[RMDB]
RNA sequence: GGGAACGACUCGAGUAGAGUCGAAAAGAUAUGGAAGCGCCACCCACUCUAGACAGUGGAUCGGAAACGAUCCACCGAAGUGGUGGGCGCUUCCUAAGUCAAAUCGGACUGCUUCGGCAGUCCGAAACUGUUAGAGCUAGUUCGCUAGCUCUAACAGAAAAGAAACAACAACAACAAC
Reactivity to DMS in 0.01 (KOAc 150mM, MgCl2 10mM, bicine 150mM(pH8.5), 24C), signal-to-noise 2, nucleotides 027 to 126: g000a040u010a300u000g000g000a040a010g010c010g010c000c020a110c140c060c020a010c000u020c300u020a150g040a140c300a110g000u000g010g000a010u010c000g000g010a070a070a190c000g010a000u000c000c000a010c000c030g000a060a050g010u000g010g030u000g000g000g010c010g020c020u000u000c000c000u020a000a080g020u000c040a080a090a160u000c020g000g000a000c000u000g000c000u000u010c200g020g020c000a000g010u010c000c040g010a000a030a090
Reactivity to 2A3 in 0.01 (KOAc 150mM, MgCl2 10mM, bicine 150mM(pH8.5), 24C), signal-to-noise 1, nucleotides 027 to 126: g020a000u070a070u110g010g020a010a000g000c020g000c020c000a080c030c060c000a030c030u050c050u080a140g080a210c140a070g020u000g000g010a000u000c000g020g000a030a080a020c000g000a000u030c000c000a010c000c000g000a140a000g040u070g020g000u040g010g000g020c000g000c000u010u000c000c000u010a010a000g010u000c020a000a000a200u050c010g000g020a020c010u010g020c000u060u060c230g130g060c010a000g000u040c000c000g010a010a000a010